[RMDB]
RNA sequence: GGGAACGACUCGAGUAGAGUCGAAAAUUAAUCCGGCUUUAAGUUGACGAGGGCAGGGUUUAUCGAGACAUCGGCGGGUGCCCUGCGCUCUUCCUGCGACCGUUAGAGGACUGGUAAACCAAUUUAACCUUUUGCAAUAAUUCGUUAUUGCAAAAGGAAAAGAAACAACAACAACAAC
Reactivity to DMS in 0.01 (KOAc 150mM, MgCl2 10mM, bicine 150mM(pH8.5), 24C), signal-to-noise 5, nucleotides 027 to 126: u010u010a090a110u010c020c020g010g000c020u000u010u010a070a090g010u000u000g010a110c100g000a040g010g010g010c010a020g000g010g010u000u000u000a060u010c050g000a110g020a150c220a080u010c090g010g000c090g020g010g010u000g000c010c010c000u000g000c020g000c000u000c010u000u000c030c060u000g000c090g000a060c030c050g010u000u010a080g010a110g000g000a070c050u000g010g000u000a040a090a150c070c040a080a120u010u010u010a100a210
Reactivity to 2A3 in 0.01 (KOAc 150mM, MgCl2 10mM, bicine 150mM(pH8.5), 24C), signal-to-noise 4, nucleotides 027 to 126: u050u040a020a060u030c000c010g010g000c010u080u080u080a090a040g030u090u080g050a040c040g000a010g030g080g010c000a010g030g020g000u050u110u090a140u080c070g010a060g050a090c090a130u100c030g100g020c000g050g070g030u030g010c000c010c000u000g000c020g050c000u000c000u000u030c000c020u030g020c030g060a080c030c020g060u010u040a050g010a060g030g050a070c020u060g040g030u070a040a040a040c020c000a040a060u110u100u090a070a060
The record gives the reactivity of an RNA of 177 nucleotides to DMS and 2A3.
The RNA was probed in 150 mM KOAc, 10 mM MgCl2 and 150 mM bicine (pH 8.5) at 24 C.
Source: RMDB library M2PK90, as collected in RNAgym.
For 2A3 the reverse transcriptase was SuperScript II with manganese.
DMS adducts were read by reverse transcription with MarathonRT.
Reactivities are given for positions 27 through 126.
For 2A3, 5,122 sequencing reads were counted.